[RMDB]
RNA sequence: GGGAACGACUCGAGUAGAGUCGAAAACCGCACUUCUUCGGAAGUGCGGAAAUACCGAGAUUGUACCUCGGUAGAAGUACAUAACCCAUGGAAACAAGGGAAAAAGCGUGAGCUUCGGCUCACGCAACAAUUUGCUAUACUUCGGUAUAGCAAAUUGAAAAGAAACAACAACAACAAC
Reactivity to 2A3 in 0.01 (KOAc 150mM, MgCl2 10mM, bicine 150mM(pH8.5), 24C), signal-to-noise 3, nucleotides 027 to 126: c000c000g000c000a000c000u000u010c000u020u040c080g120g010a000a000g000u000g030c010g000g000a020a010a010u010a000c000c000g000a000g000a030u150u240g060u200a110c010c000u000c000g010g010u020a010g020a070a020g040u100a030c030a110u150a130a100c000c010c010a040u050g050g050a070a070a070c040a130a150g030g000g000a050a080a040a060a010g010c010g000u000g010a010g000c010u050u110c190g090g000c000u000c000a000c000g000c000a000a000
Reactivity to DMS in 0.01 (KOAc 150mM, MgCl2 10mM, bicine 150mM(pH8.5), 24C), signal-to-noise 6, nucleotides 027 to 126: c000c000g000c010a000c000u000u000c010u000u010c230g030g020a020a000g020u010g010c000g000g010a000a020a100u000a030c000c000g000a020g000a100u000u000g000u000a290c100c000u000c000g010g000u000a000g010a080a140g010u010a080c150a070u010a120a150c010c000c000a160u010g000g000a120a060a130c050a030a090g000g000g000a070a060a130a100a100g010c000g010u000g010a010g010c000u000u010c160g020g010c000u000c000a000c000g010c000a010a060

Chemical mapping of a 177-nucleotide RNA with 2A3 and DMS. 2A3 adducts were read by reverse transcription with SuperScript II with manganese. DMS adducts were read by reverse transcription with MarathonRT. Conditions: 150 mM KOAc, 10 mM MgCl2 and 150 mM bicine (pH 8.5), 24 C. It was measured as part of the RMDB library M2PK50. For DMS, 7,024 sequencing reads were counted.